[RMDB]
RNA sequence: GGGAACGACUCGAGUAGAGUCGAAAAUGAAUUAACGUCUGCAUCAUACUUUUGCAAGAUAGGUAAGGAACAGAAGUGUUGCAUGUGCAAUAGACGCGCUGCAGCGUACUCUUCACCUCUGCAAUCUACGCUAAUCCGUUCGCGGAUUAGAAAAGAAACAACAACAACAAC
Reactivity to DMS in 0.01 (KOAc 150mM, MgCl2 10mM, bicine 150mM(pH8.5), 24C), signal-to-noise 9, nucleotides 027 to 129: u010g010a090a070u060u020a070a080c110g010u000c000u000g020c040a020u000c100a130u030a080c090u020u000u010u000g040c070a080a090g030a090u040a010g010g040u040a020a030g010g010a060a190c080a070g030a050a030g040u030g040u000u000g020c000a020u070g020u000g020c190a040a030u050a070g010a080c070g000c020g010c140u040g010c180a080g030c030g020u000a090c060u020c030u000u010c020a020c010c010u030c000u000g040c050a020a020u040c050u000a060c160g020
Reactivity to 2A3 in 0.01 (KOAc 150mM, MgCl2 10mM, bicine 150mM(pH8.5), 24C), signal-to-noise 9, nucleotides 027 to 129: u110g060a010a100u110u080a090a020c030g030u000c030u040g020c020a050u030c020a040u110a230c070u090u130u070u040g020c050a110a100g030a160u130a080g070g040u070a050a070g050g040a050a030c040a070g100a140a020g070u040g030u090u010g000c010a030u220g020u000g000c020a000a060u050a150g070a060c050g000c000g010c070u140g020c030a020g000c000g010u090a190c010u000c000u020u010c010a010c000c000u010c010u000g000c010a010a020u010c020u060a020c060g000
Chemical mapping of a 170-nucleotide RNA with DMS and 2A3. For DMS the reverse transcriptase was MarathonRT. The reactions ran in a buffer of 150 mM KOAc, 10 mM MgCl2 and 150 mM bicine (pH 8.5), at 24 C. Source: RMDB library 15KLIB, as collected in RNAgym. For DMS, 80,215 sequencing reads were counted. 2A3 adducts were read by reverse transcription with SuperScript II with manganese.